[RMDB]
RNA sequence: GGGAACGACUCGAGUAGAGUCGAAAACGGAACUCCCGCUCUCCACACUCCUUCCCCCCGCGGGCCCCCCAAUUCAGAGCCAAGAACCCACCCAUCGGGGUCCGACGUUCCUACCCUUUCUUACCUGCAUGUAAGUAGGGUUCGCCCUACUUACAUGAAAAGAAACAACAACAACAAC
Reactivity to DMS in 0.01 (KOAc 150mM, MgCl2 10mM, bicine 150mM(pH8.5), 24C), signal-to-noise 2, nucleotides 027 to 126: c080g000g010a060a110c120u000c020c000c010g000c060u000c040u010c040c030a050c140a090c090u000c020c010u000u000c030c000c000c030c060c080g030c070g000g010g010c020c010c000c000c050c050a100a070u000u010c070a110g000a130g010c020c010a080a110g020a100a120c040c020c030a100c010c020c040a060u000c110g010g010g010g000u010c030c020g020a180c060g000u010u010c000c000u000a120c090c030c020u000u010u000c000u010u010a100c090c070u010g000

The record gives the reactivity of an RNA of 177 nucleotides to DMS.
The data come from the RNA Mapping Database (RMDB), library 15KREP.
DMS adducts were read by reverse transcription with MarathonRT.
The reactions ran in a buffer of 150 mM KOAc, 10 mM MgCl2 and 150 mM bicine (pH 8.5), at 24 C.